The data come from the RNA Mapping Database (RMDB), library 15KLIB. Chemical mapping of a 170-nucleotide RNA with DMS and 2A3. For 2A3 the reverse transcriptase was SuperScript II with manganese. Conditions: 150 mM KOAc, 10 mM MgCl2 and 150 mM bicine (pH 8.5), 24 C. DMS adducts were read by reverse transcription with MarathonRT.
RNA sequence: GGGAACGACUCGAGUAGAGUCGAAAACCCCCCCAUAAGAUGGCAGGAACCCACUCAUUGGGGUCCGCUGUUCCAUUCUUUCUUACCUUGUGGCCGGCAUGGUCCCAGCCUCCUCGCUGGCGCCGGCGAAGAAAAUCGUUCGCGAUUUUCAAAAGAAACAACAACAACAAC
Reactivity to DMS in 0.01 (KOAc 150mM, MgCl2 10mM, bicine 150mM(pH8.5), 24C), signal-to-noise 5, nucleotides 027 to 129: c000c000c000c000c000c000c000a100u070a030a070g000a040u020g030g000c090a100g000g000a030a020c100c000c010a110c300u000c180a200u110u080g030g010g010g040u030c000c010g040c080u030g050u060u020c070c050a040u000u090c100u030u000u020c090u000u000a120c140c110u030u030g050u070g050g030c050c000g000g000c050a120u070g090g010u100c100c000c000a060g000c000c000u030c140c040u040c160g020c000u000g030g000c020g000c030c020g010g060c000g010a010a000
Reactivity to 2A3 in 0.01 (KOAc 150mM, MgCl2 10mM, bicine 150mM(pH8.5), 24C), signal-to-noise 9, nucleotides 027 to 129: c000c000c000c000c000c000c000a060u070a100a060g030a030u030g030g010c050a070g050g040a050a050c000c010c000a090c080u200c070a260u120u270g000g000g000g000u030c000c000g110c020u030g050u090u020c020c020a050u100u070c000u060u100u030c050u100u100a190c050c030u100u160g060u110g150g010c000c000g020g000c020a090u190g080g040u100c040c000c010a000g000c010c010u150c030c040u110c110g000c000u000g030g000c000g030c010c010g010g020c010g030a030a010